[RMDB]
RNA sequence: GGGAACGACUCGAGUAGAGUCGAAAAGAGGCCCGCAUCCGGCAGAUCGUCGGGGAGCGUGCCUACGAGAUCGUGUGGAGCUCGGUCUACCGCUUCCACACGCGGGUGGCCGACCGCAUGCGGGUGGGCCGGGUACUACUGCUGGGCGACAACGCCCUCAUGCUAGUGGAUUCGUCCACUAGCAUGAAAAAGAAACAACAACAACAAC
Reactivity to 2A3 in 0.01 (KOAc 150mM, MgCl2 10mM, bicine 150mM(pH8.5), 24C), signal-to-noise 2, nucleotides 027 to 156: g030a020g000g000c010c070c000g040c000a010u030c000c000g040g000c040a030g170a300u230c080g020u020c020g000g030g000g040a120g000c000g080u030g010c000c000u020a030c030g130a010g040a160u160c010g060u010g010u040g110g000a100g030c050u020c030g030g000u000c020u050a070c010c010g000c030u180u080c160c090a110c010a020c060g000c020g000g060g030u070g070g020c090c040g080a100c000c010g040c040a040u110g030c090g000g030g100u140g020g000g020c020c120g000g010g000u060a050c020u070a040c030u140g010c080u080g000g030g020c000g030a090c040a230a090c060g000c000c000c010

Structure probing data (2A3) for a 207-nucleotide construct. The 2A3 profile rests on 712 reads. The data come from the RNA Mapping Database (RMDB), library OK3TST. Reactivities are given for positions 27 through 156. For 2A3 the reverse transcriptase was SuperScript II with manganese.